[RMDB]
RNA sequence: GGGAACGACUCGAGUAGAGUCGAAAAGAAAAUGGGUGCGUCACACUCUGACGAAAAACAAAAAGGCGCCAGACGCGUCGUCUGAAAAAUAAAAAGGUCUGUACGAGGCCCGUACAAAAGAAAGAAAGGGUAUGUAUGAGUUCGCUCAUACAUACCCAAAAGAAACAACAACAACAAC
Reactivity to DMS in 0.01 (KOAc 150mM, MgCl2 10mM, bicine 150mM(pH8.5), 24C), signal-to-noise 1, nucleotides 027 to 126: g000a060a070a120a010u040g010g040g030u010g000c090g020u020c120a100c010a260c060u000c050u000g020a200c040g000a010a000a090a120a160c040a080a100a150a030a020g000g050c090g060c130c000a020g000a140c160g000c020g030u000c010g000u010c030u040g000a000a070a000a020a030u000a020a030a020a200a060g000g000u000c080u000g000u050a000c040g000a080g010g020c140c050c010g050u110a040c050a010a050a040a040g010a150a050a010g020a060a020a010